[RMDB]
This 170-nucleotide RNA was probed chemically with DMS and 2A3.
In probing experiments dimethyl sulfate is read out at A N1 and C N3, which are open when not base-paired.
For DMS, 77,857 sequencing reads were counted.
RNA sequence: GGGAACGACUCGAGUAGAGUCGAAAAGAAAAGGGAGGAUCGGAUGGGAAGAGUAUAUCCUACGGGAAUCCCCCGGUCCCUCUCACGUCCAGCCCCUCCCCGUGUCUAGUGAAGGGAGACUCCGGGAAUAACAAGUAGUUCGCUACUUGUAAAAGAAACAACAACAACAAC
Reactivity to DMS in 0.01 (KOAc 150mM, MgCl2 10mM, bicine 150mM(pH8.5), 24C), signal-to-noise 9, nucleotides 027 to 129: g030a030a070a110a080g000g000g000a080g000g000a020u010c010g000g010a170u060g030g000g010a050a100g000a180g020u050a040u050a120u000c090c050u010a100c100g040g030g030a100a110u020c010c020c020c030c030g020g010u020c000c010c020u020c000u020c040a090c120g000u040c030c020a100g000c050c010c010c020u000c000c010c010c050g000u010g020u020c030u000a030g020u000g040a070a060g000g000g020a040g000a020c040u000c050c030g020g000g020a060a040u010a110
Reactivity to 2A3 in 0.01 (KOAc 150mM, MgCl2 10mM, bicine 150mM(pH8.5), 24C), signal-to-noise 9, nucleotides 027 to 129: g050a010a050a000a010g010g020g000a080g010g000a010u010c020g010g040a090u180g090g010g010a060a050g090a050g230u090a080u030a050u190c010c010u030a060c200g060g000g020a010a050u030c000c000c000c000c000g000g010u020c010c040c000u000c000u000c000a060c050g070u040c010c010a050g020c020c000c000c010u030c000c000c000c000g040u040g020u020c020u010a090g050u080g270a100a050g070g040g010a030g000a010c010u020c020c020g000g030g000a040a060u130a120
Conditions: 150 mM KOAc, 10 mM MgCl2 and 150 mM bicine (pH 8.5), 24 C. For DMS the reverse transcriptase was MarathonRT. Values are in units of 0.01, from 0 to 300, in steps of 10.